RNA sequence: GGGAACGACUCGAGUAGAGUCGAAAAAUAGUGUUAUUCGUAACACUAUAUAACCGAACUCAAGGAUUCGUUCCAGAGACAUGCAUGCUAGCAUGAAAGCAACUGAACAAGCGUUCGCGCUUGUUAAAUAGAGAAUUAAUUUCGAUUAAUUCUCUAUAAAAGAAACAACAACAACAAC
Reactivity to DMS in 0.01 (KOAc 150mM, MgCl2 10mM, bicine 150mM(pH8.5), 24C), signal-to-noise 4, nucleotides 027 to 126: a000u000a000g000u000g000u000u000a020u000u010c140g010u000a010a010c010a010c000u000a000u010a040u000a120a130c290c000g010a120a060c010u000c000a070a190g000g010a050u000u000c010g000u000u000c000c000a130g000a150g010a100c020a000u000g010c020a100u000g010c230u010a100g010c010a010u000g010a080a120a110g010c170a070a060c100u000g010a040a020c000a000a020g000c000g030u000u000c260g010c010g010c000u010u000g000u000u000a030a080
Reactivity to 2A3 in 0.01 (KOAc 150mM, MgCl2 10mM, bicine 150mM(pH8.5), 24C), signal-to-noise 2, nucleotides 027 to 126: a000u000a010g010u010g020u020u020a040u030u070c200g020u030a010a000c000a000c010u000a000u000a000u010a020a030c040c010g000a160a050c010u000c020a030a060g110g000a020u000u030c010g010u020u000c000c000a000g030a010g000a090c020a000u000g030c010a000u110g230c040u120a070g000c010a020u010g060a050a010a000g020c030a030a090c100u170g070a000a000c040a000a010g000c020g030u060u080c210g020c000g000c070u000u000g000u010u010a010a040
An RNA of 177 nucleotides, treated with DMS and 2A3 and read out base by base. Source: RMDB library M2PK50, as collected in RNAgym. DMS adducts were read by reverse transcription with MarathonRT. The reactions ran in a buffer of 150 mM KOAc, 10 mM MgCl2 and 150 mM bicine (pH 8.5), at 24 C.